[RMDB]
RNA sequence: GGGAACGACUCGAGUAGAGUCGAAAAGAUAUGGAGUGCCGCAACAGCGUGCCCAUCGGAAACGAUGGCACGACAUGCUGCACUCCUAAGUCAAACCCUGUAGACCUGUUCGCAGGUCUACAGGGAACGACAUAUGUUUGUUCGCAAACAUAUGUCGAAAAGAAACAACAACAACAAC
Reactivity to DMS in 0.01 (KOAc 150mM, MgCl2 10mM, bicine 150mM(pH8.5), 24C), signal-to-noise 4, nucleotides 027 to 126: g000a030u000a090u010g000g000a030g010u000g000c000c070g000c000a010a290c300a100g000c000g020u000g000c150c020c030a000u000c000g010g000a030a010a060c000g010a010u000g000g000c000a010c010g010a060c140a040u000g000c000u000g000c000a010c000u000c000c000u000a000a050g000u000c010a160a120a200c000c000c000u000g000u000a000g000a010c010c000u000g010u000u010c240g010c000a000g010g000u000c010u000a000c000a000g010g000g010a000a010
Reactivity to 2A3 in 0.01 (KOAc 150mM, MgCl2 10mM, bicine 150mM(pH8.5), 24C), signal-to-noise 4, nucleotides 027 to 126: g000a010u020a010u060g010g000a000g010u010g000c000c030g010c060a040a050c080a220g130c010g000u010g030c130c010c000a000u000c000g010g000a020a010a000c000g000a010u010g000g000c000a000c000g030a050c010a040u020g000c000u010g000c000a000c000u000c000c000u000a000a000g000u000c000a030a040a240c000c000c000u000g000u000a000g000a010c010c000u020g070u110u130c300g000c140a000g000g000u000c000u000a000c000a000g000g010g000a000a020

An RNA of 177 nucleotides, treated with DMS and 2A3 and read out base by base. Conditions: 150 mM KOAc, 10 mM MgCl2 and 150 mM bicine (pH 8.5), 24 C. Source: RMDB library TTRDEL, as collected in RNAgym. For DMS, 6,420 sequencing reads were counted.